[RMDB]
RNA sequence: GGGAACGACUCGAGUAGAGUCGAAAAUUCAGUUGACAAUUGGUUGAGAGGGUUAAGCUAUUGUCUAAAGGCUUAAAGUCAAUAGUAAGUAAUGCUUGAGUUAAAGGAGGUUGUGGGGUCCAAGGUUCUUGUUACGUUGAUGAAUCCUCAUAGGUAGCACGGAGUGUAGGUUCGCCUACACUCCGUGAAAAGAAACAACAACAACAAC
Reactivity to 2A3 in 0.01 (KOAc 150mM, MgCl2 10mM, bicine 150mM(pH8.5), 24C), signal-to-noise 2, nucleotides 027 to 156: u050u000c020a020g050u010u000g040a020c050a050a120u040u080g040g040u030u030g020a060g030a000g010g100g030u060u020a040a000g000c000u020a040u030u030g020u040c020u090a100a060a000g020g030c020u070u080a140a020a010g010u020c040a040a000u070a030g070u080a160a010g030u020a000a110u090g080c090u020u040g030a020g040u020u120a010a060a080g010g020a020g020g030u020u040g020u040g020g010g000g000u000c010c000a030a000g000g000u030u030c010u000u010g020u050u010a040c080g000u010u010g010a060u040g030a040a060u040c010c040u090c040a060u110a190g070g010u120a020g030
Reactivity to DMS in 0.01 (KOAc 150mM, MgCl2 10mM, bicine 150mM(pH8.5), 24C), signal-to-noise 1, nucleotides 027 to 156: u030u000c050a110g000u000u000g010a120c040a090a100u000u000g060g010u000u000g030a120g020a100g030g040g020u000u000a080a140g020c010u000a000u020u000g000u000c060u040a060a080a060g020g010c070u010u000a040a060a070g010u000c010a040a040u000a060g000u010a030a020g040u000a050a110u000g000c050u000u000g010a120g040u010u000a030a070a070g000g010a110g030g010u000u000g000u010g010g010g060g010u000c040c030a030a030g000g010u000u000c020u000u000g030u000u000a070c150g000u010u000g010a160u000g000a040a080u010c010c040u010c070a130u000a140g040g000u000a090g020

Overview
This 207-nucleotide RNA was probed chemically with 2A3 and DMS. Conditions: 150 mM KOAc, 10 mM MgCl2 and 150 mM bicine (pH 8.5), 24 C. Source: RMDB library OK3TST, as collected in RNAgym.